Source: RMDB library TTRDES, as collected in RNAgym. Structure probing data (DMS and 2A3) for a 177-nucleotide construct. The 2A3 profile rests on 1,638 reads. For DMS the reverse transcriptase was MarathonRT. For 2A3 the reverse transcriptase was SuperScript II with manganese. The DMS profile rests on 1,086 reads.

RNA sequence: GGGAACGACUCGAGUAGAGUCGAAAAGAUAUGGAUUCCGCGAAACUAUACCCUUCAAGGAAAUAUCGGAAACGAUAUUUCUGAAGGUAUAGGAGGAAUCCUAAGUCAAACGUCACUUCGGUGACGACACUGAGGGGAUCUUCGGAUCCCCUCAGUGAAAAGAAACAACAACAACAAC
Reactivity to DMS in 0.01 (KOAc 150mM, MgCl2 10mM, bicine 150mM(pH8.5), 24C), signal-to-noise 2, nucleotides 027 to 126: g020a080u000a300u000g000g000a010u000u000c010c010g040c200g030a300a220a270c000u040a000u030a000c080c030c050u000u000c150a120a190g020g000a000a040a000u000a000u010c000g030g000a140a120a170c000g040a000u000a000u000u000u000c000u000g000a050a020g000g010u000a000u000a000g000g000a170g010g000a000a000u000c000c000u000a030a070g000u000c010a040a110a230c010g020u000c000a020c000u000u010c250g020g040u010g000a000c010g010a130
Reactivity to 2A3 in 0.01 (KOAc 150mM, MgCl2 10mM, bicine 150mM(pH8.5), 24C), signal-to-noise 1, nucleotides 027 to 126: g000a010u060a040u110g010g000a000u010u000c030c010g000c100g050a220a060a010c010u080a020u020a030c160c130c070u030u040c170a240a140g180g000a040a020a000u000a010u000c000g030g070a020a210a000c010g030a010u010a020u000u030u000c050u090g010a050a000g060g000u000a020u010a010g080g020a100g000g000a000a020u030c000c000u030a140a040g050u000c050a070a070a070c010g040u000c000a010c030u090u080c300g230g000u020g050a020c030g000a030